[RMDB]
RNA sequence: GGGAACGACUCGAGUAGAGUCGAAAAGAAAGUAUAUUGGUGAGCAAAAUACCACUUUUAAGAAGAUCAAUUUUAUAUGACUCCAAGCCUGCCCACCCUUGCUCGCAUUAGAAAUCUGUAAUUUGGCGUGUUACCAAAGUUUCGACUUUGGUAACACAAAAGAAACAACAACAACAAC
Reactivity to DMS in 0.01 (KOAc 150mM, MgCl2 10mM, bicine 150mM(pH8.5), 24C), signal-to-noise 1, nucleotides 027 to 126: g010a020a080a160g030u030a120u010a030u000u010g000g070u010g020a040g020c030a080a050a120a050u010a080c020c040a100c030u050u000u000u000a070a270g000a120a110g040a080u000c040a100a120u020u010u010u000a180u010a110u010g020a060c010u000c020c080a110a120g000c000c000u020g020c020c010c060a110c120c070c060u000u000g010c030u000c000g030c000a010u020u000a030g000a050a100a190u000c020u000g000u000a050a050u000u000u000g040g010c300